[RMDB]
RNA sequence: GGGAACGACUCGAGUAGAGUCGAAAAAGAUCCAAGGCGGCACCCGCGAGGGUGGUUUCAGGUAUGAAAUCGACAGGUACUAAAUCAGUGAACAGAGGGGCAAACAACGCUAUCACGGUAAAAAAAAUUCAUAGAAGCUUUUCGAAGCUUCUAUGAAAAAAGAAACAACAACAACAAC
Reactivity to DMS in 0.01 (KOAc 150mM, MgCl2 10mM, bicine 150mM(pH8.5), 24C), signal-to-noise 3, nucleotides 027 to 126: a090g020a080u010c020c040a100a110g000g000c030g010g000c030a030c020c010c000g010c250g010a090g020g000g030u000g010g010u000u000u010c020a080g020g020u040a030u020g010a030a040a020u010c030g020a080c130a060g020g010u010a030c090u020a020a070a070u030c110a070g030u010g000a090a100c040a040g000a080g000g000g000g000c040a070a070a070c130a060a060c070g010c010u000a030u010c020a020c040g000g000u020a000a000a000a020a110a030a070a120
Reactivity to 2A3 in 0.01 (KOAc 150mM, MgCl2 10mM, bicine 150mM(pH8.5), 24C), signal-to-noise 2, nucleotides 027 to 126: a000g040a030u020c000c000a010a020g100g000c040g000g040c010a020c020c030c030g020c000g000a040g020g030g000u040g000g000u000u020u040c000a000g020g050u090a120u110g070a020a030a040u090c020g010a040c020a040g020g010u050a040c040u070a030a080a160u080c050a050g050u010g090a080a010c050a060g040a040g060g050g020g010c000a070a150a000c030a040a000c070g000c010u030a010u130c010a010c100g090g060u160a000a010a000a000a000a010a010a060
This 177-nucleotide RNA was probed chemically with DMS and 2A3. The DMS profile rests on 5,147 reads. Values are in units of 0.01, from 0 to 300, in steps of 10. The RNA was probed in 150 mM KOAc, 10 mM MgCl2 and 150 mM bicine (pH 8.5) at 24 C. The 2A3 profile rests on 1,444 reads.